An RNA of 177 nucleotides, treated with DMS and 2A3 and read out base by base.
It was measured as part of the RMDB library OK2TST.
The 2A3 profile rests on 913 reads.
The DMS profile rests on 991 reads.
RNA sequence: GGGAACGACUCGAGUAGAGUCGAAAACGGCUUGCCACAGCACCCGGUAGUUGAUGCCGUCGGCGGUGCGGGCAUUGAACUGCGAGACCGCGGGCGUGACGCUGCCGCGAAUCGCAUUGACCGUGGCCCAAACCUGCGUGUUCGCACGCAGGUUUGGAAAAGAAACAACAACAACAAC
Reactivity to DMS in 0.01 (KOAc 150mM, MgCl2 10mM, bicine 150mM(pH8.5), 24C), signal-to-noise 1, nucleotides 027 to 126: c000g010g020c060u000u000g020c020c030a060c080a160g050c020a110c020c000c020g010g010u000a020g020u000u000g000a160u000g000c000c020g030u020c160g000g020c090g000g000u000g000c030g030g010g000c020a040u000u010g000a060a110c150u000g010c010g000a040g000a140c130c000g010c000g020g040g010c000g020u000g010a150c190g020c050u020g000c030c000g000c020g040a090a220u000c060g020c020a030u000u000g000a130c020c030g020u000g020g040c030
Reactivity to 2A3 in 0.01 (KOAc 150mM, MgCl2 10mM, bicine 150mM(pH8.5), 24C), signal-to-noise 1, nucleotides 027 to 126: c000g000g030c010u050u030g040c020c000a130c020a060g000c040a000c000c000c000g080g010u070a090g020u010u180g120a110u100g020c010c000g160u170c050g140g140c080g040g050u080g010c110g000g060g010c020a000u000u110g060a030a010c040u050g010c000g020a000g070a110c150c000g020c000g020g000g020c030g000u070g020a070c130g070c040u150g060c010c010g000c000g010a000a050u000c030g030c030a020u000u050g030a050c080c000g020u020g000g040c000
The RNA was probed in 150 mM KOAc, 10 mM MgCl2 and 150 mM bicine (pH 8.5) at 24 C.